[RMDB]
RNA sequence: GGGAACGACUCGAGUAGAGUCGAAAAAGAAAUGGAACCUGAACAUGAGGAAGGAGGCAACUCAUAAAGUGUUUGAAUAUCUGGGUGAUUUAUUCGGUUAUAAACAUCUGUAUAAUAGAACGUAUGAGAUACAUAACGUAUUCGUACGUUAUGUAUCAAAAGAAACAACAACAACAAC
Reactivity to 2A3 in 0.01 (KOAc 150mM, MgCl2 10mM, bicine 150mM(pH8.5), 24C), signal-to-noise 7, nucleotides 027 to 126: a000g030a000a030a000u090g020g010a020a040c010c010u020g030a060a020c020a080u070g020a020g050g010a050a040g030g030a010g030g030c030a030a040c020u030c040a020u110a090a150a010g080u070g020u040u070u040g040a050a010u040a020u040c030u040g000g000g040u040g140a250u030u040u030a030u030u110c060g080g020u160u080a060u050a040a040a010c010a010u020c010u040g060u030a030u020a090a080u070a050g060a030a010c010g030u060a060u130g110a090
Reactivity to DMS in 0.01 (KOAc 150mM, MgCl2 10mM, bicine 150mM(pH8.5), 24C), signal-to-noise 9, nucleotides 027 to 126: a060g010a060a090a090u000g010g010a080a090c040c030u010g010a090a100c120a060u010g000a080g010g010a090a070g010g000a060g010g010c060a070a080c060u000c040a050u010a070a070a100g010u010g010u000u000u000g000a100a150u000a030u000c040u000g000g010g020u000g000a130u000u000u000a020u000u000c150g020g010u010u000a030u000a020a020a030c020a010u000c020u000g010u000a020u000a030a040u010a230g000a030a030c040g010u000a060u000g000a160
Chemical mapping of a 177-nucleotide RNA with 2A3 and DMS. For 2A3, 9,143 sequencing reads were counted. The RNA was probed in 150 mM KOAc, 10 mM MgCl2 and 150 mM bicine (pH 8.5) at 24 C.